Chemical mapping of a 207-nucleotide RNA with 2A3 and DMS. The data come from the RNA Mapping Database (RMDB), library OK3TST. Conditions: 150 mM KOAc, 10 mM MgCl2 and 150 mM bicine (pH 8.5), 24 C.
[RMDB]
RNA sequence: GGGAACGACUCGAGUAGAGUCGAAAACAUGCGGUGUUUGGUUUUUUGUCCUUGCGAUCGUUUGCUGAGAGUGAUGAUUUCCAGCUUCAUCCGUGUCCGUACAAAGGACAUGAACUCAUCCUUUUUUAUGGCUGCAUAGUAUUCCAUGGUGUAUAUGGCUAAAAAUGAAAUUCGUUUCAUUUUUAGCAAAAGAAACAACAACAACAAC
Reactivity to 2A3 in 0.01 (KOAc 150mM, MgCl2 10mM, bicine 150mM(pH8.5), 24C), signal-to-noise 7, nucleotides 027 to 156: c030a020u050g020c030g000g010u060g050u100u100u060g040g040u030u040u030u020u070u110g020u000c000c000u010u050g020c060g060a080u030c040g070u050u150u160g000c020u040g030a070g010a040g190u100g070a150u050g030a050u150u060u020c030c020a010g020c000u050u060c030a060u030c050c030g030u050g050u050c050c050g030u050a110c090a060a090a020g000g000a000c000a000u010g020a010a010c020u020c080a080u090c030c010u080u130u060u030u070u170a110u210g060g000c010u010g000c010a020u030a080g040u020a140u070u010c020c010a030u070g030g020u050g070u030a060u030a050u240g070
Reactivity to DMS in 0.01 (KOAc 150mM, MgCl2 10mM, bicine 150mM(pH8.5), 24C), signal-to-noise 3, nucleotides 027 to 156: c050a100u000g020c030g040g040u000g020u000u000u010g030g020u000u000u000u000u000u000g020u010c010c010u000u000g040c040g020a070u000c080g030u000u010u010g010c050u020g020a090g000a080g020u000g010a130u000g000a120u000u010u000c000c020a070g000c040u000u010c040a120u010c050c000g040u000g020u000c020c020g010u010a140c230a080a100a110g020g020a030c000a020u000g010a020a030c060u000c060a080u010c030c030u010u000u000u010u000u010a120u030g020g020c020u010g000c020a050u000a130g010u000a080u000u000c020c010a100u000g000g020u000g030u000a070u000a110u000g020